[RMDB]
The data come from the RNA Mapping Database (RMDB), library OK2TST. The record gives the reactivity of an RNA of 177 nucleotides to DMS and 2A3.

RNA sequence: GGGAACGACUCGAGUAGAGUCGAAAAGAUGAGUUGGCAGUCAUGCGCAGCGCAGAUGUCGCGCGCUGCACGGAUUUCGGCACGAAGCUGCGCAUCUGCCUUGUCCUUGACGCGCAACUGCACAAGAGCUGGUCAUACCAUUCGUGGUAUGACCAGCAAAAGAAACAACAACAACAAC
Reactivity to DMS in 0.01 (KOAc 150mM, MgCl2 10mM, bicine 150mM(pH8.5), 24C), signal-to-noise 2, nucleotides 027 to 126: g010a150u000g000a110g020u000u000g000g000c000a070g000u000c100a000u000g020c180g000c010a020g020c270g000c030a100g000a040u000g050u010c040g060c060g000c030g010c080u000g000c030a090c060g020g010a220u000u000u020c040g010g010c020a020c150g000a090a300g020c000u010g030c020g000c010a000u010c010u000g020c010c040u000u000g010u000c070c010u000u000g020a050c030g020c010g020c000a010a030c030u000g000c050a060c150a100a120g000a200
Reactivity to 2A3 in 0.01 (KOAc 150mM, MgCl2 10mM, bicine 150mM(pH8.5), 24C), signal-to-noise 2, nucleotides 027 to 126: g120a070u140g040a040g100u130u040g050g040c030a020g020u110c000a010u030g020c000g000c090a020g020c030g000c060a000g030a090u070g050u210c000g000c010g000c020g000c110u040g010c000a050c080g060g020a190u110u240u230c010g000g000c030a010c090g050a080a040g000c100u110g010c070g000c000a000u000c010u000g000c000c000u000u040g000u000c000c000u030u020g040a040c000g010c010g000c020a020a050c040u090g010c050a070c040a100a030g040a020
About this RNA:
The RNA was probed in 150 mM KOAc, 10 mM MgCl2 and 150 mM bicine (pH 8.5) at 24 C. 2A3 is a SHAPE reagent: it acylates the 2'-hydroxyl of flexible nucleotides of all four kinds.